RNA sequence: GGGAACGACUCGAGUAGAGUCGAAAACGCGAUGGAUACGUCCAUCGCGAAUACGUCCCAGCCGCGGACGUUAAACUGUGGCACGGUUGUGCCUAGGUGCAACCCUGCUACUAAUGGCGGUACCCCUGCCCAAGCUACCGUCUACGGACGGUAGCAACCAUCACUACGAGUUCGCUCGUAGUGAUGGAAAAGAAACAACAACAACAAC
Reactivity to 2A3 in 0.01 (KOAc 150mM, MgCl2 10mM, bicine 150mM(pH8.5), 24C), signal-to-noise 2, nucleotides 027 to 156: c020g000c000g010a020u030g010g000a020u030a070c210g120u020c000c000a000u000c000g000c000g010a000a000u120a020c010g000u010c010c000c020a020g030c030c010g000c010g000g020a010c040g020u010u080a030a060a030c130u070g000u010g040g000c000a010c020g010g000u000u000g010u010g030c040c030u060a250g110g000u000g010c010a000a000c000c000c000u000g010c000u000a010c000u060a110a220u190g100g010c000g000g010u110a120c000c000c000c020u060g030c020c030c010a080a030g010c000u000a000c000c010g000u010c000u010a030c270g110g000a000c000g010g000u000a000g000c000a000a000